[RMDB]
RNA sequence: GGGAACGACUCGAGUAGAGUCGAAAAGAUAUGGACGUGAACUUGGACCACCGUGUCGGAAACGACACCGGUGCUAGUCACGUCCUAAGUCAAAAGUUCUAUCAGAAGUUCGCUUCUGAUAGAACAACAUGGUGGAAUUCUUCGGAAUUCCACCAUGAAAAGAAACAACAACAACAAC
Reactivity to DMS in 0.01 (KOAc 150mM, MgCl2 10mM, bicine 150mM(pH8.5), 24C), signal-to-noise 3, nucleotides 027 to 126: g000a060u000a300u000g010g000a000c000g020u000g010a060a070c020u010u000g010g000a100c300c010a040c090c070g030u010g030u010c010g000g000a080a070a190c000g000a000c000a010c120c080g040g000u000g000c000u000a010g000u000c000a010c000g000u000c000c000u000a000a090g020u020c020a070a050a090a140g010u000u000c000u000a000u000c000a000g000a010a000g030u010u020c250g030c010u000u010c000u000g000a000u000a000g000a010a000c010a050a110
Reactivity to 2A3 in 0.01 (KOAc 150mM, MgCl2 10mM, bicine 150mM(pH8.5), 24C), signal-to-noise 2, nucleotides 027 to 126: g010a020u010a030u090g000g000a000c000g000u000g060a160a190c040u140u180g070g110a220c110c010a020c010c040g000u000g000u030c000g000g020a080a050a030c020g010a010c000a010c010c150g030g010u000g000c000u010a000g000u000c000a000c010g010u000c000c000u000a000a000g010u000c010a010a020a010a240g000u010u000c000u000a020u020c000a010g010a020a000g030u080u140c250g060c190u020u000c010u000g010a000u010a000g000a000a000c010a000a000